[RMDB]
RNA sequence: GGGAACGACUCGAGUAGAGUCGAAAAAAUAGCGGGUCAAGGUACAACGCAGAGAGAUAGGCUCAUCCCAAGAUCUCUUCGGAGUACCAAGACUUCGGUACAGAAGAGAUACCGACUCUUCAUAGAAUACCGGAAUAGAUUUCGAUCUAUUCCGGUAAAAAGAAACAACAACAACAAC
Reactivity to 2A3 in 0.01 (KOAc 150mM, MgCl2 10mM, bicine 150mM(pH8.5), 24C), signal-to-noise 2, nucleotides 027 to 126: a030a020u210a050g090c050g000g000g000u000c000a020a030g000g000u010a000c000a040a030c030g010c010a010g000a000g000a000g010a030u090a110g080g030c070u090c120a100u070c000c020c000a000a010g050a020u000c010u000c000u020u000c000g030g000a030g010u000a000c000c000a000a000g010a010c000u060u030c020g020g020u050a050c030a090g030a020a000g010a010g010a050u040a100c000c000g080a080c010u020c000u030u000c010a040u070a100g120a080a060
Reactivity to DMS in 0.01 (KOAc 150mM, MgCl2 10mM, bicine 150mM(pH8.5), 24C), signal-to-noise 4, nucleotides 027 to 126: a100a030u010a060g020c010g020g000g020u000c010a050a300g000g010u000a000c010a030a300c030g000c110a040g010a020g010a030g000a150u010a150g000g050c090u000c300a070u000c300c020c000a050a050g000a090u000c000u000c000u000u020c010g000g010a300g000u000a000c010c000a000a280g000a030c030u010u010c000g000g000u000a040c170a130g010a030a010g010a020g000a060u010a110c030c020g000a110c020u000c000u000u000c000a130u020a090g000a090a090